[RMDB]
RNA sequence: GGGAACGACUCGAGUAGAGUCGAAAACAGCGAGGGUGGCGCGCUGCGUUGACGCGGUGCUCUGCUUGGCUGUGUGUCGGUGUGGCCUGCCCCCCUGUAGAGGGGUGUCGUAGGCUACCCGUUGAAGCGAGGGAAACCGGGUCAGGCCGGAAACGGACUAUGCUCACUACUUCGGUAGUGAGCAUAGAAAAGAAACAACAACAACAAC
Reactivity to 2A3 in 0.01 (KOAc 150mM, MgCl2 10mM, bicine 150mM(pH8.5), 24C), signal-to-noise 2, nucleotides 027 to 156: c020a000g020c000g080a230g030g030g070u000g010g000c000g000c010g000c010u010g000c010g030u060u300g200a170c100g020c000g010g040u000g000c020u010c020u040g040c030u020u090g090g050c000u000g000u010g020u040g050u110c050g000g040u160g020u030g100g010c000c000u020g010c010c000c000c000c010c000u040g040u220a180g060a060g100g000g000g000u000g040u060c070g000u020a000g010g000c000u000a000c000c010c010g010u050u100g080a080a030g050c050g020a100g040g000g000a090a070a020c020c020g000g010g030u150c100a040g010g160c010c020g000g020a100a000a010c000g010g020a020
Reactivity to DMS in 0.01 (KOAc 150mM, MgCl2 10mM, bicine 150mM(pH8.5), 24C), signal-to-noise 1, nucleotides 027 to 156: c020a010g030c000g040a090g020g030g040u000g010g010c080g020c000g010c000u000g020c010g020u000u000g010a120c110g020c020g050g010u000g000c020u000c000u000g020c000u000u010g010g050c040u000g000u000g010u000g020u000c020g010g020u000g030u000g020g000c020c000u010g000c010c010c010c000c010c000u030g000u000a110g000a090g000g010g010g020u000g030u000c080g030u000a030g010g030c000u000a000c010c000c000g040u000u010g010a060a190g020c040g000a090g030g010g000a090a130a170c050c040g020g030g040u000c120a180g030g010c030c020g040g010a030a000a120c040g020g000a300

Source: RMDB library ARCHII, as collected in RNAgym. Chemical mapping of a 207-nucleotide RNA with 2A3 and DMS. The 2A3 profile rests on 1,322 reads. For DMS the reverse transcriptase was MarathonRT. The RNA was probed in 150 mM KOAc, 10 mM MgCl2 and 150 mM bicine (pH 8.5) at 24 C.